[RMDB]
An RNA of 170 nucleotides, treated with DMS and 2A3 and read out base by base.
RNA sequence: GGGAACGACUCGAGUAGAGUCGAAAAGGAACAAGGAAAUAGAACAAGGUACGGUAGAAAAGAGCGAGCCUCCCGAUACGAGUUUGCCAGGACCUAUCAAGUUUGGAGUCAUCCGGGCCCUAAGGUAGUAGCAUGGUGUUCGCACCAUGCAAAAGAAACAACAACAACAAC
Reactivity to DMS in 0.01 (KOAc 150mM, MgCl2 10mM, bicine 150mM(pH8.5), 24C), signal-to-noise 5, nucleotides 027 to 129: g020g020a030a050c080a070a110g030g030a020a020a010u040a040g010a090a050c070a050a110g010g040u000a040c120g000g050u020a070g000a050a040a060a090g010a120g050c130g000a040g010c100c030u000c050c010c040g010a070u070a060c150g020a070g060u000u020u030g000c070c030a070g030g020a060c000c010u040a070u030c070a010a130g010u000u000u000g040g020a030g020u000c120a000u010c040c030g000g000g000c000c020c060u000a020a010g000g000u080a000g020u030a010
Reactivity to 2A3 in 0.01 (KOAc 150mM, MgCl2 10mM, bicine 150mM(pH8.5), 24C), signal-to-noise 4, nucleotides 027 to 129: g070g010a060a030c040a000a020g060g020a040a040a020u110a060g060a040a020c020a020a030g000g050u100a020c050g030g000u070a040g120a050a130a050a000g020a010g000c030g000a010g000c000c000u020c000c000c020g020a040u050a040c080g000a000g010u010u050u080g010c030c000a030g000g000a050c030c010u020a040u090c020a070a040g000u030u060u080g030g010a000g010u030c000a050u020c000c000g000g000g010c000c010c000u010a030a030g050g000u000a030g040u050a020